[RMDB]
RNA sequence: GGGAACGACUCGAGUAGAGUCGAAAAGUAACAUAAGCAAAGGACUUGAACCAGACAUGGUGCCCAGUCCCUCCACUAUUCACUCGAUCUAUGCAGAGGCUGACCACAUGCUAAGAAUGGCGGGACAUCUAAGUGCUAGGUUCGCCUAGCACUUAGAAAAAGAAACAACAACAACAAC
Reactivity to 2A3 in 0.01 (KOAc 150mM, MgCl2 10mM, bicine 150mM(pH8.5), 24C), signal-to-noise 2, nucleotides 027 to 126: g050u050a100a040c100a130u130a110a000g070c070a100a000a090g040g010a030c010u030u030g000a030a030c000c000a000g040a100c050a180u050g040g000u060g040c000c000c000a000g030u000c000c000c010u030c000c000a070c030u080a070u070u100c030a020c040u060c020g130a130u020c040u120a070u170g010c020a000g010a010g130g000c030u040g040a110c040c020a090c000a080u090g020c000u060a110a000g080a160a050u020g020g000c040g010g000g040a000c000a020
Reactivity to DMS in 0.01 (KOAc 150mM, MgCl2 10mM, bicine 150mM(pH8.5), 24C), signal-to-noise 4, nucleotides 027 to 126: g020u010a090a080c100a090u000a080a140g010c120a090a150a120g020g000a040c010u010u000g010a220a050c020c030a040g000a140c300a080u000g000g000u000g000c080c030c040a090g000u010c020c010c000u010c050c080a060c090u010a060u010u010c070a110c070u000c070g010a060u000c060u000a060u020g020c060a110g000a110g000g000c050u000g000a140c060c050a120c140a040u010g000c060u000a070a080g000a060a060u010g010g000c060g020g000g000a050c080a130
Background
Structure probing data (2A3 and DMS) for a 177-nucleotide construct. The reactions ran in a buffer of 150 mM KOAc, 10 mM MgCl2 and 150 mM bicine (pH 8.5), at 24 C. Reactivities are given for positions 27 through 126. The data come from the RNA Mapping Database (RMDB), library OK2TRN.